Chemical mapping of a 177-nucleotide RNA with DMS and 2A3. Values cover nucleotides 27 to 126. 2A3 adducts were read by reverse transcription with SuperScript II with manganese. Source: RMDB library TTRDES, as collected in RNAgym. The RNA was probed in 150 mM KOAc, 10 mM MgCl2 and 150 mM bicine (pH 8.5) at 24 C.

[RMDB]
RNA sequence: GGGAACGACUCGAGUAGAGUCGAAAAGAUAUGGACGAUUAACACGUCUUUGAUCUACUUCGGAAACGAAGUAGGGAGACGGUUACGUGUCGUCCUAAGUCAAAAGACGCACGUUCGCGUGCGUCAACGAUGUAGUAGACUUCGGUCUACUACAUCGAAAAGAAACAACAACAACAAC
Reactivity to DMS in 0.01 (KOAc 150mM, MgCl2 10mM, bicine 150mM(pH8.5), 24C), signal-to-noise 6, nucleotides 027 to 126: g010a030u000a280u010g010g010a010c000g040a060u010u010a050a030c050a280c170g010u000c000u000u010u020g000a090u020c010u000a000c000u000u000c010g020g000a070a060a200c010g010a010a020g010u000a000g000g000g010a010g020a020c010g030g000u000u000a050c300g000u010g000u000c010g020u000c000c000u000a010a110g010u000c020a050a070a110a140g000a020c010g020c010a010c000g010u000u010c260g030c000g000u000g010c000g000u000c000a030a060
Reactivity to 2A3 in 0.01 (KOAc 150mM, MgCl2 10mM, bicine 150mM(pH8.5), 24C), signal-to-noise 5, nucleotides 027 to 126: g030a020u050a030u110g000g010a000c020g000a010u050u150a110a040c270a070c300g010u000c000u300u070u050g040a030u000c000u000a000c000u000u000c010g020g000a030a030a030c010g000a000a000g000u000a010g010g000g000a010g000a000c050g050g050u080u100a140c270g160u140g030u090c010g000u000c000c000u000a120a020g060u000c020a000a000a050a250g000a000c000g010c000a000c000g010u090u090c300g000c000g110u000g000c020g000u000c000a000a000